[RMDB]
This 177-nucleotide RNA was probed chemically with 2A3 and DMS. For 2A3 the reverse transcriptase was SuperScript II with manganese. It was measured as part of the RMDB library TTRDES. Conditions: 150 mM KOAc, 10 mM MgCl2 and 150 mM bicine (pH 8.5), 24 C.

RNA sequence: GGGAACGACUCGAGUAGAGUCGAAAAGAUAUGGAUUACUCCCAGGGAGGUACCUGUCGGAAACGACAGGAAUACCUUUGAUCUGGAGAGUAAUCCUAAGUCAAAGAACGUUCUUCGGAACGUUCAAGUAGGAGAAUGUGUUCGCACAUUCUCCUACAAAAGAAACAACAACAACAAC
Reactivity to 2A3 in 0.01 (KOAc 150mM, MgCl2 10mM, bicine 150mM(pH8.5), 24C), signal-to-noise 2, nucleotides 027 to 126: g040a050u100a030u250g000g000a010u000u000a000c000u010c000c000c020a000g000g000g020a020g010g020u010a030c010c000u000g010u000c000g050g020a090a050a040c010g000a000c000a040g020g000a010a030u010a000c000c000u060u190u030g040a030u010c010u000g020g000a300g000a030g300u010a000a000u000c000c000u020a070a000g030u000c050a050a030a210g010a000a000c000g020u030u000c030u070u100c300g130g030a020a000c030g000u000u000c010a000a010
Reactivity to DMS in 0.01 (KOAc 150mM, MgCl2 10mM, bicine 150mM(pH8.5), 24C), signal-to-noise 2, nucleotides 027 to 126: g010a040u000a300u000g000g000a010u000u000a000c000u010c000c000c010a020g030g000g010a010g010g010u000a020c000c000u010g000u000c010g000g010a160a140a200c000g010a010c000a000g000g010a120a110u000a000c000c000u000u010u020g010a070u010c000u000g000g020a160g020a030g000u000a010a010u000c000c000u000a020a120g000u010c020a100a130a130g010a010a000c000g010u000u000c000u000u000c240g010g010a010a000c000g010u000u000c010a040a070